[RMDB]
Source: RMDB library OK2TST, as collected in RNAgym. Structure probing data (DMS and 2A3) for a 177-nucleotide construct. Values cover nucleotides 27 to 126. For 2A3 the reverse transcriptase was SuperScript II with manganese. DMS adducts were read by reverse transcription with MarathonRT.
RNA sequence: GGGAACGACUCGAGUAGAGUCGAAAAUGCGUGCCUAGGGACGACGCCUUCUGGUCUGGCUAUGCCCAUCAAACUGCUGUUUUCUUUGAUGACUUGGGUCAAAUCUAUGAUGGUGCAGGGCAAUGCCCCUUCGAGAGAGCUUCGGCUCUCUCGAAGGAAAAGAAACAACAACAACAAC
Reactivity to DMS in 0.01 (KOAc 150mM, MgCl2 10mM, bicine 150mM(pH8.5), 24C), signal-to-noise 1, nucleotides 027 to 126: u010g010c100g040u010g050c010c020u040a140g030g020g000a070c090g010a140c120g020c040c040u000u010c050u000g010g010u000c060u000g000g000c050u010a120u000g000c070c030c030a080u000c090a030a040a100c150u000g050c040u010g000u000u000u000u020c060u000u000u000g000a090u020g010a100c060u010u030g000g010g000u010c050a000a070a060u000c040u000a100u020g000a060u000g000g050u010g020c030a060g030g000g010c060a070a080u000g010c000c050
Reactivity to 2A3 in 0.01 (KOAc 150mM, MgCl2 10mM, bicine 150mM(pH8.5), 24C), signal-to-noise 1, nucleotides 027 to 126: u120g000c030g030u090g060c000c020u070a130g000g000g050a000c050g020a030c030g020c000c000u030u090c020u060g040g010u000c020u020g030g000c010u010a050u060g030c090c030c000a000u000c000a000a090a050c080u140g050c000u050g210u100u150u070u000c060u040u080u050g030a040u040g060a060c000u080u090g220g000g030u010c000a020a030a050u060c060u190a100u170g050a030u020g070g000u090g000c030a030g000g060g000c000a060a000u080g010c000c020